Structure probing data (DMS and 2A3) for a 177-nucleotide construct.
RNA sequence: GGGAACGACUCGAGUAGAGUCGAAAAUUCGUCUCGGACCGGCUCAUCUUCGGCAAAGGGCGGCGGUCCUCAGUGCUCUUACUCUUUUCUGUAAAGAGGAGACUGCUGGACUCUCCGCCCAAGCCGAUCUUGACUGUAAGUUCGCUUACAGUCAAGAAAAAGAAACAACAACAACAAC
Reactivity to DMS in 0.01 (KOAc 150mM, MgCl2 10mM, bicine 150mM(pH8.5), 24C), signal-to-noise 2, nucleotides 027 to 126: u000u020c050g010u000c020u000c020g000g030a080c050c020g000g000c060u020c100a110u000c090u020u020c000g020g000c020a110a180a220g000g010g050c030g000g050c300g030g000u000c010c010u020c040a010g000u000g020c060u010c000u010u010a300c050u000c020u030u000u000u000c300u020g000u010a000a000a000g020a040g010g000a010g010a020c010u000g000c090u000g060g000a020c000u000c080u000c000c020g060c000c010c000a000a170g020c000c000g000a040
Reactivity to 2A3 in 0.01 (KOAc 150mM, MgCl2 10mM, bicine 150mM(pH8.5), 24C), signal-to-noise 1, nucleotides 027 to 126: u010u010c020g020u020c020u010c030g000g060a040c020c010g000g000c000u040c030a080u020c020u090u000c030g000g000c000a060a030a180g000g000g000c000g010g000c010g020g000u010c010c000u000c000a030g000u070g170c020u000c020u090u140a220c020u000c000u090u070u100u110c140u220g250u290a000a020a020g010a000g020g000a000g000a010c000u010g050c060u020g010g000a010c000u050c020u020c100c010g020c000c000c010a000a010g000c000c000g000a000
DMS (dimethyl sulfate) methylates the pairing face of unpaired adenines and cytosines. For 2A3, 1,269 sequencing reads were counted. For 2A3 the reverse transcriptase was SuperScript II with manganese. Reactivities are given for positions 27 through 126.